[RMDB]
Overview: Structure probing data (2A3 and DMS) for a 177-nucleotide construct. The DMS profile rests on 3,881 reads. It was measured as part of the RMDB library OK2TRN. Conditions: 150 mM KOAc, 10 mM MgCl2 and 150 mM bicine (pH 8.5), 24 C.
RNA sequence: GGGAACGACUCGAGUAGAGUCGAAAAUACGUAUAAUGCGCUAGCAUAUAUCGGCAUUAUACGAUUACGCGCGUAUAUAAUAUCGGCCGGCGCCGGCAUCGGCUACGCGUACGGCAUUAUAGCAUCGUCUCUUGGAUGAAUUCGUUCAUCCAAGAGAAAAAGAAACAACAACAACAAC
Reactivity to 2A3 in 0.01 (KOAc 150mM, MgCl2 10mM, bicine 150mM(pH8.5), 24C), signal-to-noise 3, nucleotides 027 to 126: u080a010c010g010u010a000u010a020a000u020g010c100g050c130u100a100g090c170a080u170a010u020a040u300c080g110g000c000a000u000u000a010u000a010c010g000a030u050u100a060c100g040c030g020c030g110u040a060u010a010u010a260a140u050a040u110c050g000g000c020c010g050g040c040g030c010c050g040g080c050a080u250c080g140g000c010u030a010c040g010c010g040u040a270c020g020g000c030a010u070u020a020u070a040g020c030a080u090c050g100
Reactivity to DMS in 0.01 (KOAc 150mM, MgCl2 10mM, bicine 150mM(pH8.5), 24C), signal-to-noise 4, nucleotides 027 to 126: u000a130c000g000u010a010u000a010a020u000g020c000g010c130u000a060g010c300a090u000a110u000a040u000c060g010g030c000a010u010u000a010u000a000c000g010a120u000u000a080c130g020c120g010c120g000u000a080u000a020u000a030a040u000a060u000c050g010g000c010c030g020g000c150g020c000c030g020g020c150a090u010c050g020g000c030u010a030c030g010c090g040u000a050c070g010g010c060a030u010u000a020u000a050g010c080a090u000c090g010